[RMDB]
RNA sequence: GGGAACGACUCGAGUAGAGUCGAAAAGAUUCCUCGUUGUUGAGCGAGGUUAAAACAAAUCGACCACACAAACGUAGAGCCGACUACGGAUUUAUAAAUUAAGGCAUUAAGUGUGAUAAGGAGACAAAAAACGAUGUUGUGUUCGCACAACAUCGAACUGACUUGACAAGUUCGCUUGUCAAGUCAGAAAAGAAACAACAACAACAAC
Reactivity to DMS in 0.01 (KOAc 150mM, MgCl2 10mM, bicine 150mM(pH8.5), 24C), signal-to-noise 1, nucleotides 027 to 156: g000a300u000u020c000c000u000c050g030u020u030g040u010u000g020a120g010c040g000a030g020g080u000u010a030a030a080a160c060a060a010a110u000c010g040a010c010c030a050c040a170c050a150a180a110c000g000u000a000g000a100g090c000c010g100a110c010u000a040c010g030g010a220u010u000u000a120u000a010a030a130u000u000a000a080g000g010c040a220u000u030a030a290g010u010g000u000g000a110u030a020a050g010g020a180g000a100c070a010a040a100a070a040a220c020g010a070u000g040u020u000g020u000g000u000u010c280g000c000a010c030a000a010c000a000u010c010g030a020a110
Reactivity to 2A3 in 0.01 (KOAc 150mM, MgCl2 10mM, bicine 150mM(pH8.5), 24C), signal-to-noise 3, nucleotides 027 to 156: g050a060u130u150c000c000u000c000g010u010u040g000u000u010g000a000g000c000g000a000g010g040u050u070a010a010a000a000c100a000a000a010u020c010g000a000c000c000a000c000a000c000a020a160a010c010g000u010a000g000a020g050c000c010g040a020c000u000a000c010g000g020a020u030u300u040a210u120a130a010a020u090u110a010a000g010g010c000a000u140u190a150a040g000u000g000u000g010a000u020a040a000g140g030a060g020a030c090a060a160a070a010a010a010c010g000a000u000g000u000u000g010u000g010u040u070c190g040c060a000c000a000a000c000a000u000c000g000a000a000